[RMDB]
Notes: Structure probing data (DMS) for a 177-nucleotide construct. DMS adducts were read by reverse transcription with MarathonRT. Source: RMDB library OK1LIB, as collected in RNAgym.
RNA sequence: GGGAACGACUCGAGUAGAGUCGAAAAUUUUUACAAGCCAAUAAAGUAACAGGAACAGGAUUACCAAUCGUUCUUGGAUGUACAUUCACGGCUGUUGCGCCCAUGAUUUUAAUUGGUCAAACGAAAGUCCGCUCUGUAGAUUCGUCUACAGAGCGGAAAAAGAAACAACAACAACAAC
Reactivity to DMS in 0.01 (KOAc 150mM, MgCl2 10mM, bicine 150mM(pH8.5), 24C), signal-to-noise 1, nucleotides 027 to 126: u040u050u010u090u000a050c130a160a060g030c000c000a120a280u000a050a100a070g000u000a050a140c000a010g000g010a000a000c010a110g000g000a090u070u000a230c300c300a080a210u000c040g000u000u030c050u000u010g080g000a140u000g020u030a000c090a150u000u000c080a050c150g000g060c000u000g000u000u000g030c060g010c050c030c070a120u050g000a080u000u070u000u050a000a110u000u010g000g010u000c100a080a080a050c040g000a060a180a120g000